[RMDB]
Notes
Source: RMDB libraries RFM100 and RFMREP, as collected in RNAgym. Chemical mapping of a 177-nucleotide RNA with DMS and 2A3. Values cover nucleotides 27 to 126. For 2A3 the reverse transcriptase was SuperScript II with manganese.

RNA sequence: GGGAACGACUCGAGUAGAGUCGAAAAUGUUUGAAUGCCUGCUCUAUGAUAGACAUGUGAAAUGAGUGCCAUUUUCAGUCUCACUAUUGAGCACAUUUUGACCUCUAAGAAACUUUCUGCAAUUCACUCCUAUGCCGAGUUUCGACUCGGCAUAGGAAAAAGAAACAACAACAACAAC
Reactivity to DMS in 0.01 (KOAc 150mM, MgCl2 10mM, bicine 150mM(pH8.5), 24C), signal-to-noise 1, nucleotides 027 to 126: u030g010u010u010u020g000a040a060u000g000c080c190u000g000c000u010c010u000a090u010g050a100u010a010g020a020c000a080u000g030u110g000a000a050a020u050g000a210g030u020g020c080c030a060u030u010u000u000c090a090g000u000c010u010c090a030c110u000a100u010u000g000a000g000c020a030c020a050u000u000u000u000g000a030c000c050u000c010u000a050a100g000a040a080a090c110u000u000u030c040u000g040c080a100a050u030u050c100a040c090
Reactivity to 2A3 in 0.01 (KOAc 150mM, MgCl2 10mM, bicine 150mM(pH8.5), 24C), signal-to-noise 2, nucleotides 027 to 126: u190g000u010u000u080g050a010a010u020g010c030c040u050g000c010u000c000u020a090u070g100a120u100a020g010a020c090a150u010g020u040g090a000a010a010u050g010a020g070u170g160c020c000a000u030u000u020u050c010a000g000u020c000u020c030a010c000u060a050u040u120g000a000g000c000a000c000a040u000u000u000u040g000a050c000c000u000c030u080a110a060g070a160a160a060c040u030u120u120c010u050g000c020a050a080u010u080c010a000c080